This 207-nucleotide RNA was probed chemically with 2A3. It was measured as part of the RMDB library OK3TST.
RNA sequence: GGGAACGACUCGAGUAGAGUCGAAAAUCUUCUAUUGACACCAGGCAUUGGAUUUAAUGCUUACCCUAAUCUGAUAUGACCUCUUCUUAACUAAUUACAUCUUCAGGGCCUCUAUUUCCAAAUAAGGUCUCUUUUGAGGUUCUGGGUGAACAUAGAACGACUAAAUUACCUUCGGGUAAUUUAGUCGAAAAGAAACAACAACAACAAC
Reactivity to 2A3 in 0.01 (KOAc 150mM, MgCl2 10mM, bicine 150mM(pH8.5), 24C), signal-to-noise 1, nucleotides 027 to 156: u020c000u080u000c010u010a120u060u050g000a010c010a020c050c000a020g030g080c020a040u030u050g060g130a040u080u030u150a060a010u070g010c000u000u130a090c020c000c000u060a090a140u070c030u040g040a030u110a060u300g040a020c010c010u040c080u140u140c040u200u100a070a120c000u070a020a120u060u100a090c010a030u020c030u140u050c060a020g030g000g040c000c010u030c000u020a060u110u030u040c030c010a130a140a210u150a100a010g000g000u000c000u050c000u170u140u140u070g020a010g010g000u060u000c040u030g000g040g000u000g030a010a000c040a070u190a010g070a030a010